RNA sequence: GGGAACGACUCGAGUAGAGUCGAAAAGCGCAAGUGGGUGCGCGAAUGCGCGGGGCGUGCGAGGUGAGUGUGUGCGCCCGCCCCUGCGCCCCUCCCCCUGCCUACAACUUGAUCUUAUUUGAUCGGGAUUAGGGCGUCAAUUCGUUGACGCCCUAAUAAAAGAAACAACAACAACAAC
Reactivity to DMS in 0.01 (KOAc 150mM, MgCl2 10mM, bicine 150mM(pH8.5), 24C), signal-to-noise 1, nucleotides 027 to 126: g000c060g030c050a060a070g020u020g000g020g040u010g020c010g000c000g010a030a060u070g000c000g030c020g020g020g030g000c040g020u000g000c060g000a070g010g000u000g000a060g000u030g010u010g010u050g000c000g000c000c000c010g070c000c030c000c040u060g030c000g000c000c020c030c060u030c030c000c050c060c010u020g000c030c020u020a050c080a160a110c000u030u000g000a000u000c000u000u030a180u010u000u060g000a000u000c000g000g000g000
Reactivity to 2A3 in 0.01 (KOAc 150mM, MgCl2 10mM, bicine 150mM(pH8.5), 24C), signal-to-noise 4, nucleotides 027 to 126: g000c000g000c000a070a080g020u060g050g050g010u060g000c010g010c010g000a110a090u190g010c000g020c010g010g000g000g000c020g010u060g000c020g010a100g070g110u220g100a130g050u230g050u060g030u060g040c000g010c000c000c000g000c000c000c000c000u040g000c000g000c010c000c000c000u010c020c000c000c000c020u060g040c010c020u020a040c020a090a020c010u050u100g010a000u020c020u050u280a250u240u220u140g010a000u000c000g040g000g010